[RMDB]
RNA sequence: GGGAACGACUCGAGUAGAGUCGAAAACCUGUUCCUGGGGACUUGAAGGCGGUUUUACAUACUGGUCAGACACGGCUGGAGGCCAAGGUCAAGUUGAAAGUUGCAGUCCAGCCAGCAUGAGAACUGCUAUAUUAUACAAGUUCGCUUGUAUAAUAUAAAAAGAAACAACAACAACAAC
Reactivity to 2A3 in 0.01 (KOAc 150mM, MgCl2 10mM, bicine 150mM(pH8.5), 24C), signal-to-noise 9, nucleotides 027 to 126: c000c000u010g020u010u020c000c010u020g010g010g010g030a050c030u060u120g090a090a030g070g010c020g000g030u000u010u020u060a070c020a010u030a020c010u030g040g010u070c040a010g010a040c010a010c050g010g000c010u030g020g040a020g040g000c020c020a050a030g140g050u120c070a070a040g010u030u030g040a050a030a020g020u040u040g030c100a030g030u000c010c010a010g000c010c000a010g010c010a020u030g010a010g000a060a010c000u000g000c000
Reactivity to DMS in 0.01 (KOAc 150mM, MgCl2 10mM, bicine 150mM(pH8.5), 24C), signal-to-noise 9, nucleotides 027 to 126: c010c000u000g010u000u000c000c000u000g010g010g010g010a170c150u010u010g010a080a080g000g010c030g010g010u000u010u010u010a100c060a040u010a080c030u000g000g000u010c060a160g000a050c050a290c090g000g010c010u000g010g010a220g010g000c020c060a080a140g010g010u020c120a080a100g010u000u000g000a170a090a050g000u000u000g010c090a080g010u000c010c030a210g000c010c010a040g010c040a030u000g000a110g000a040a040c020u000g010c030